This 177-nucleotide RNA was probed chemically with 2A3.
RNA sequence: GGGAACGACUCGAGUAGAGUCGAAAAACGAGGAAAGUCCGGACUCCACAGAGCACGGUGAUUGUUAACAACAACCCGGGGUGACCCGCGGGCAAGUGCAACAGAAAGUAAACCGCCUAGAAUUUUUUGACUUUCAAUUAUUCGUAAUUGAAAGUCAAAAAGAAACAACAACAACAAC
Reactivity to 2A3 in 0.01 (KOAc 150mM, MgCl2 10mM, bicine 150mM(pH8.5), 24C), signal-to-noise 2, nucleotides 027 to 126: a010c020g010a050g050g060a250a020a000g040u000c000c020g000g030a010c000u030c040c000a060c050a050g060a000g020c070a010c040g030g040u130g020a200u080u080g020u060u060a090a060c130a020a020c000a050a020c020c000c000g000g000g000g060u050g050a140c000c020c000g050c040g050g020g020c010a040a090g030u020g060c000a050a020c030a050g090a030a120a000g000u050a070a100a160c010c010g000c060c030u050a080g080a300a270u030u040u000u000u030